The record gives the reactivity of an RNA of 177 nucleotides to DMS and 2A3. Source: RMDB library M2PK50, as collected in RNAgym. Conditions: 150 mM KOAc, 10 mM MgCl2 and 150 mM bicine (pH 8.5), 24 C. As a SHAPE reagent, 2A3 marks flexible, mostly unpaired nucleotides at the ribose 2'-OH.
RNA sequence: GGGAACGACUCGAGUAGAGUCGAAAAGCCAUGAGUUUCGACUCAUGGCAAAAGCGCGUCAGCGCUACGAUGCAAGCGCUAGCGCGUCCAUCGUAAAUGACAAAAUUCUCGGGUUCGCCCGAGAAAAACAGGUUAUACGGUUCGCCGUAUAACCUGUAAAAGAAACAACAACAACAAC
Reactivity to DMS in 0.01 (KOAc 150mM, MgCl2 10mM, bicine 150mM(pH8.5), 24C), signal-to-noise 2, nucleotides 027 to 126: g000c000c000a010u000g000a040g000u000u000u010c120g020a090c000u000c010a000u000g000g010c000a000a030a050a120g010c010g000c020g010u000c050a040g000c010g010c000u000a030c100g030a110u010g060c160a210a030g010c000g020c000u000a080g020c000g010c000g010u000c070c020a050u010c050g000u020a080a060a020u010g020a140c170a130a070a080a130u000u000c000u000c000g010g000g000u010u010c230g010c000c000c000g000a020g010a000a010a020a050
Reactivity to 2A3 in 0.01 (KOAc 150mM, MgCl2 10mM, bicine 150mM(pH8.5), 24C), signal-to-noise 2, nucleotides 027 to 126: g000c000c000a000u010g000a000g010u050u030u180c140g020a000c000u010c010a000u010g000g010c000a000a000a030a000g000c010g000c010g030u030c030a010g030c030g000c020u010a040c060g190a150u270g070c190a070a030g000c000g000c020u020a020g000c000g000c000g020u040c050c020a070u080c010g100u170a060a150a130u130g040a050c060a030a120a020a160u040u000c020u000c000g000g000g000u020u070c210g120c000c000c000g010a000g000a000a000a000a000